[RMDB]
RNA sequence: GGGAACGACUCGAGUAGAGUCGAAAAGUGUUUUACUAAGAGAUGCCACUUAUGGGCUUUAAAUUUUGCAAAGUGGCAAAAAGCCUAGGGAAUUUCCCAUAACAAGUUCUUAUAUGGGUUCAUGCUAGAGUGAAGUAUCAUUCGUGAUACUUCACUCAAAAGAAACAACAACAACAAC
Reactivity to DMS in 0.01 (KOAc 150mM, MgCl2 10mM, bicine 150mM(pH8.5), 24C), signal-to-noise 2, nucleotides 027 to 126: g000u000g010u000u010u000u000a120c000u010a010a110g030a200g030a240u000g010c040c000a010c000u000u000a120u010g040g010g020c020u010u010u010a040a090a290u010u000u000u000g010c010a110a020a040g050u000g010g000c000a010a060a080a100a120g020c040c020u000a010g010g000g000a060a060u000u010u000c000c020c000a170u020a040a170c060a040a090g040u000u000c070u010u000a110u000a080u020g000g000g000u000u010c100a040u000g010c100u000a100